[RMDB]
RNA sequence: GGGAACGACUCGAGUAGAGUCGAAAAGGGUGAGACCUAGGAACCGUAGGGGUAUUCUCAAAGGAAGCUUUUGCAGUGACGCCCAUGUAAGUGGGAUAUAACAACUGAACUCGUAUGAGUAGCCUAAUAAAUCGGACCUUCUUCGGAAGGUCCGAAACAAUCGUACAAUGUUCGCAUUGUACGAUUGAAAAGAAACAACAACAACAAC
Reactivity to 2A3 in 0.01 (KOAc 150mM, MgCl2 10mM, bicine 150mM(pH8.5), 24C), signal-to-noise 3, nucleotides 027 to 156: g020g010g030u030g020a080g040a040c010c050u050a040g070g080a030a090c040c020g040u100a030g000g050g000g000u030a080u080u050c060u040c040a040a060a010g060g000a070a060g040c020u010u040u110u150g010c040a010g000u000g030a010c060g020c010c020c000a020u060g070u110a100a120g020u010g000g010g000a010u040a000u020a110a040c080a010a050c020u040g030a030a010c030u010c030g060u160a050u180g000a000g010u040a010g040c000c000u050a100a080u100a090a140a040u020c010g000g010a000c000c000u000u010c010u020u030c080g080g010a000a000g000g000u000c010c000g000a000a000a000
Reactivity to DMS in 0.01 (KOAc 150mM, MgCl2 10mM, bicine 150mM(pH8.5), 24C), signal-to-noise 1, nucleotides 027 to 156: g030g020g050u000g010a120g000a100c030c000u000a100g040g010a090a060c020c050g020u000a080g030g030g000g000u000a090u010u000c010u000c020a110a100a180g000g000a100a050g010c050u000u000u020u000g000c010a030g020u000g020a100c090g000c000c010c000a000u000g050u020a090a170g000u000g000g010g000a100u010a060u000a110a150c050a060a130c040u010g020a090a020c040u000c020g000u000a120u010g010a090g030u010a060g000c050c010u000a050a070u000a010a080a140u010c000g000g000a030c070c000u010u000c000u000u010c300g030g000a020a010g020g020u010c000c010g010a000a010a010